[RMDB]
Chemical mapping of a 177-nucleotide RNA with DMS and 2A3.
2A3 adducts were read by reverse transcription with SuperScript II with manganese.
Conditions: 150 mM KOAc, 10 mM MgCl2 and 150 mM bicine (pH 8.5), 24 C.
As a SHAPE reagent, 2A3 marks flexible, mostly unpaired nucleotides at the ribose 2'-OH.
Source: RMDB library OK2TRN, as collected in RNAgym.
In probing experiments dimethyl sulfate is read out at A N1 and C N3, which are open when not base-paired.
RNA sequence: GGGAACGACUCGAGUAGAGUCGAAAAGAGCUCCAGCACGAACGGCGAGGCGGGCAAGCCCGCCCGGUUGUAGAGCGAGGCGACGGGGGCGUCGGCCCAGGCGUAGCGCACCGCGGUGGGAGCGGGCUGCAGUAAUACCAUUCGUGGUAUUACUGCAAAAAGAAACAACAACAACAAC
Reactivity to DMS in 0.01 (KOAc 150mM, MgCl2 10mM, bicine 150mM(pH8.5), 24C), signal-to-noise 6, nucleotides 027 to 126: g000a190g010c010u000c010c020a150g020c040a080c060g020a100a070c110g010g010c020g010a050g020g020c010g010g010g000c190a120a150g010c000c000c010g010c010c010c010g000g020u010u000g010u000a110g010a150g010c020g000a100g010g000c020g010a070c090g000g000g010g000g000c040g010u010c150g010g000c030c010c020a130g000g010c010g010u010a100g020c030g000c040a100c040c020g010c050g000g010u000g010g000g010a070g010c020g010g000g020c120
Reactivity to 2A3 in 0.01 (KOAc 150mM, MgCl2 10mM, bicine 150mM(pH8.5), 24C), signal-to-noise 1, nucleotides 027 to 126: g130a030g000c020u020c020c000a020g050c040a000c080g050a170a010c030g050g010c010g020a060g050g020c070g040g040g030c220a180a020g090c010c000c000g030c030c010c000g050g020u090u040g070u070a060g000a020g040c010g030a060g040g000c050g000a070c020g050g010g030g020g030c000g050u100c060g170g030c020c000c000a020g030g020c020g060u080a040g060c010g000c020a060c110c000g010c030g010g050u090g030g040g000a020g000c070g000g050g000c010